[RMDB]
RNA sequence: GGGAACGACUCGAGUAGAGUCGAAAAGAUAUGGACCCAGGACAUGAUCCGUGGUCGGAAACGACCACGGGAUCAACAGCCUGGUCCUAAGUCAAAACUACCCAGAUAGUUCGCUAUCUGGGUAGAAUCAAGGUUACUAGUUCGCUAGUAACCUUGAAAAAGAAACAACAACAACAAC
Reactivity to 2A3 in 0.01 (KOAc 150mM, MgCl2 10mM, bicine 150mM(pH8.5), 24C), signal-to-noise 2, nucleotides 027 to 126: g010a030u070a040u150g010g000a020c080c160c080a020g020g010a020c080a220u090g000a010u030c030c020g000u010g000g000u000c000g020g010a120a110a040c010g000a000c000c000a010c010g000g010g000a010u010c000a010a070c020a050g090c000c010u000g010g000u000c010c000u030a150a020g020u000c010a000a000a080a210c000u000a000c010c000c000a000g000a000u000a000g010u050u080c300g020c210u000a000u000c000u000g030g020g010u000a000g010a000a010
Reactivity to DMS in 0.01 (KOAc 150mM, MgCl2 10mM, bicine 150mM(pH8.5), 24C), signal-to-noise 4, nucleotides 027 to 126: g010a030u000a300u010g010g000a020c140c060c050a010g000g000a050c070a190u000g000a010u000c000c000g010u010g000g000u000c000g000g010a050a060a170c010g010a030c010c000a000c000g020g020g010a000u020c000a030a100c180a150g000c000c000u000g000g010u000c000c000u000a020a100g010u010c020a030a070a150a180c010u000a010c000c000c000a000g000a010u000a010g010u000u020c250g010c000u000a000u000c000u000g000g010g020u000a000g000a010a080